[RMDB]
RNA sequence: GGGAACGACUCGAGUAGAGUCGAAAAGCGAGGGCAGUGAAUUUGGACCUGUACGCUACUCAAUUGGUUACGCAUUCCGAGGUGGCAACAAGGAUACAAUGCUUCAGCUGCAUAGCUCGGAAACCUCCGGAUUACGUAGUUUCGACUACGUAAUCCGAAAAGAAACAACAACAACAAC
Reactivity to DMS in 0.01 (KOAc 150mM, MgCl2 10mM, bicine 150mM(pH8.5), 24C), signal-to-noise 3, nucleotides 027 to 126: g000c000g020a090g000g000g000c020a010g040u000g000a010a020u000u030u000g000g000a070c020c000u000g000u010a080c220g000c000u020a080c010u020c060a080a030u020u010g010g000u010u060a090c300g030c140a110u050u000c060c060g010a120g020g000u000g000g000c000a080a040c100a070a060g020g000a100u010a090c070a030a030u030g020c180u020u000c060a100g000c030u000g000c000a060u020a210g010c010u040c060g050g010a090a030a070c020c030u000c100
Reactivity to 2A3 in 0.01 (KOAc 150mM, MgCl2 10mM, bicine 150mM(pH8.5), 24C), signal-to-noise 4, nucleotides 027 to 126: g020c000g000a020g010g060g000c000a000g000u030g100a070a130u070u040u040g040g030a060c000c000u010g020u040a040c100g010c000u010a020c020u050c050a060a240u090u090g030g030u110u080a130c160g040c120a080u140u000c020c010g010a020g010g050u020g010g010c020a030a010c020a070a080g030g000a030u090a270c050a040a070u110g070c030u030u040c030a070g030c020u000g000c010a060u070a070g040c000u010c000g030g000a040a040a030c000c000u010c020